RNA sequence: GGGAACGACUCGAGUAGAGUCGAAAACGGCAGCAACGCGGCGCAUAUCGCUGUUGCGGUGGACGAAGCUGCUGAGACGUUCAUCGCGAUCUCGGCGAUCGACAAUCUCGUCAAGGGCACCGCUGGAAGGCUCCUAAAUGUUCGCAUUUAGGAGCCUAAAAGAAACAACAACAACAAC
Reactivity to 2A3 in 0.01 (KOAc 150mM, MgCl2 10mM, bicine 150mM(pH8.5), 24C), signal-to-noise 1, nucleotides 027 to 126: c000g020g000c030a000g020c030a090a050c060g030c030g010g030c030g000c000a060u050a010u150c010g000c000u060g040u080u070g010c010g020g000u000g000g000a010c010g040a090a020g030c070u160g000c040u080g090a050g030a020c010g000u050u020c040a050u030c000g000c050g040a230u020c040u020c070g000g020c030g000a040u020c010g010a010c050a050a130u110c080u080c110g050u030c050a090a040g030g020g020c010a010c070c010g000c000u010g000g080a050
Reactivity to DMS in 0.01 (KOAc 150mM, MgCl2 10mM, bicine 150mM(pH8.5), 24C), signal-to-noise 2, nucleotides 027 to 126: c060g010g010c020a020g030c030a100a080c110g000c010g010g030c000g020c120a090u000a060u000c020g000c020u010g010u000u000g000c010g020g030u000g040g000a060c010g040a190a110g020c050u000g000c070u000g010a070g050a130c010g000u000u010c060a050u000c010g000c010g000a030u000c220u020c020g000g000c000g030a010u000c150g030a050c100a070a160u000c100u010c100g010u000c060a120a140g020g000g000c030a060c020c050g010c010u010g010g000a210
Chemical mapping of a 177-nucleotide RNA with 2A3 and DMS. The 2A3 profile rests on 1,309 reads. 2A3 adducts were read by reverse transcription with SuperScript II with manganese.